[RMDB]
RNA sequence: GGGAACGACUCGAGUAGAGUCGAAAAAUGGUGUCCCCGCGGGCUUGUUCCUCGUAGAUAUGCGAGGGAGCGGCUUUUGCCCCCGAUCCGCGGGCAUAUACUACCACUCGAACGUGCUAGACUUAAAAACUCUAGUGGAGAGACAACACCUACCGCCCUAAUAUUUCCUAUUCGUAGGAAAUAUUAGAAAAGAAACAACAACAACAAC
Reactivity to 2A3 in 0.01 (KOAc 150mM, MgCl2 10mM, bicine 150mM(pH8.5), 24C), signal-to-noise 3, nucleotides 027 to 156: a000u090g000g000u000g020u020c000c010c010c000g000c000g000g010g010c040u090u300g010u060u040c000c000u000c000g010u020a100g150a300u230a150u300g010c000g000a010g000g010g000a030g070c050g040g000c000u200u190u200u300g010c010c010c030c010c010g030a060u030c010c000g000c000g000g040g000c010a020u180a000u010a080c020u050a070c010c050a020c010u030c030g060a130a060c050g060u080g040c020u030a000g020a100c010u060u100a020a000a030a030a030c010u000c000u000a010g000u030g010g010a060g000a000g010a020c040a060a010c010a080c000c000u030a040c000c040g100c030c010
Reactivity to DMS in 0.01 (KOAc 150mM, MgCl2 10mM, bicine 150mM(pH8.5), 24C), signal-to-noise 2, nucleotides 027 to 156: a150u000g020g010u000g000u010c080c000c010c010g010c000g040g000g010c010u030u000g030u000u010c030c000u000c050g030u000a120g010a230u030a110u000g010c000g020a060g030g010g020a020g050c020g020g020c030u000u010u010u010g020c030c000c020c050c050g000a100u000c050c020g010c070g020g000g070c030a030u000a120u000a100c030u010a040c020c030a110c030u000c040g010a130a140c060g030u000g000c030u000a030g040a050c020u000u000a010a190a210a160a130c300u000c010u000a050g040u020g020g000a300g000a160g020a110c000a040a020c010a020c000c010u000a120c020c000g000c140c060
Record summary:
Conditions: 150 mM KOAc, 10 mM MgCl2 and 150 mM bicine (pH 8.5), 24 C. The record gives the reactivity of an RNA of 207 nucleotides to 2A3 and DMS. For DMS the reverse transcriptase was MarathonRT. Values cover nucleotides 27 to 156. For 2A3, 1,506 sequencing reads were counted. 2A3 is a SHAPE reagent: it acylates the 2'-hydroxyl of flexible nucleotides of all four kinds. For 2A3 the reverse transcriptase was SuperScript II with manganese. For DMS, 2,396 sequencing reads were counted.